Record summary: The record gives the reactivity of an RNA of 207 nucleotides to DMS and 2A3. 2A3 adducts were read by reverse transcription with SuperScript II with manganese. For DMS the reverse transcriptase was MarathonRT. The RNA was probed in 150 mM KOAc, 10 mM MgCl2 and 150 mM bicine (pH 8.5) at 24 C. For DMS, 2,999 sequencing reads were counted.
RNA sequence: GGGAACGACUCGAGUAGAGUCGAAAAGGGGUCGAGGUCUCUAGCGUGUUCGCGUGAUGGUGAUGGAGACCUGAAGCCUCCACGGGUCUAUGAAGUCACCUGACGAAUCGGGCCUCGACGGAGGCACCCAAAAGCCCAAUACUUCGGUAUUGGGCAAUACUUUAACGUUGUUCGCAACGUUAAAGUAAAAAGAAACAACAACAACAAC
Reactivity to DMS in 0.01 (KOAc 150mM, MgCl2 10mM, bicine 150mM(pH8.5), 24C), signal-to-noise 2, nucleotides 027 to 156: g030g000g000g010u000c050g000a100g070g020u000c010u020c020u020a090g000c120g010u030g040u000u000c060g020c180g010u010g000a170u000g060g000u010g000a070u000g000g000a060g000a020c000c000u010g030a040a150g010c020c010u000c010c010a240c000g040g040g000u010c010u000a190u030g010a270a290g000u020c000a010c050c020u010g020a040c030g030a070a080u000c050g020g000g010c010c010u000c000g040a050c050g030g030a020g030g030c020a040c010c010c020a100a070a100a180g030c000c000c000a040a000u000a010c010u000u010c300g060g010u000a010u000u010g010g040g050c020a010a000
Reactivity to 2A3 in 0.01 (KOAc 150mM, MgCl2 10mM, bicine 150mM(pH8.5), 24C), signal-to-noise 4, nucleotides 027 to 156: g050g010g000g010u010c010g010a010g010g040u020c040u040c070u220a090g060c160g160u300g080u180u070c070g000c180g080u060g030a040u070g010g040u020g000a010u040g000g020a020g000a000c010c020u000g000a030a000g000c000c000u030c010c000a010c010g000g000g010u000c010u020a300u130g010a000a020g000u010c000a060c090c060u060g030a030c030g020a030a020u070c080g010g000g010c010c000u020c030g000a000c020g000g000a010g000g010c000a010c000c010c000a050a150a010a040g000c000c000c000a000a000u000a000c020u050u070c300g090g000u000a000u000u000g000g000g000c000a000a010